[RMDB]
RNA sequence: GGGAACGACUCGAGUAGAGUCGAAAAUAUAAAUAAGAAUUCGGGCCUUUUCCGGACGCACCGCGUGCAAUGCUACGUGCAGCGAUGCACGUAGCUAAAGGCCCGAAGGCUAGCAAAAGCUAGCCAACAGUAUAUAGCCUUUCGAGGCUAUAUACUGAAAAGAAACAACAACAACAAC
Reactivity to 2A3 in 0.01 (KOAc 150mM, MgCl2 10mM, bicine 150mM(pH8.5), 24C), signal-to-noise 6, nucleotides 027 to 126: u140a010u070a030a170a050u230a120a060g090a090a090u050u010c000g000g000g000c020c000u030u030u040u070c080c070g030g020a030c020g010c040a220c120c230g050c040g020u060g050c050a060a070u070g010c000u000a000c000g000u000g010c000a010g020c010g020a010u000g000c000a000c000g000u010a000g000c000u000a000a000a000g000g000c000c000c000g010a000a000g000g010c000u000a000g000c010a090a190a300a130g010c000u000a000g000c000c000a010a010
Reactivity to DMS in 0.01 (KOAc 150mM, MgCl2 10mM, bicine 150mM(pH8.5), 24C), signal-to-noise 3, nucleotides 027 to 126: u040a100u010a090a060a110u060a090a120g010a130a280u010u000c000g000g000g000c000c000u000u000u020u050c170c150g000g020a060c040g010c050a070c170c240g000c080g020u000g020c030a090a030u010g000c010u000a030c000g010u000g000c000a010g000c300g000a210u000g020c000a000c000g010u000a000g030c000u010a010a010a000g000g010c010c010c000g010a000a000g000g020c000u000a010g000c010a100a090a120a160g000c000u000a000g010c000c010a070a080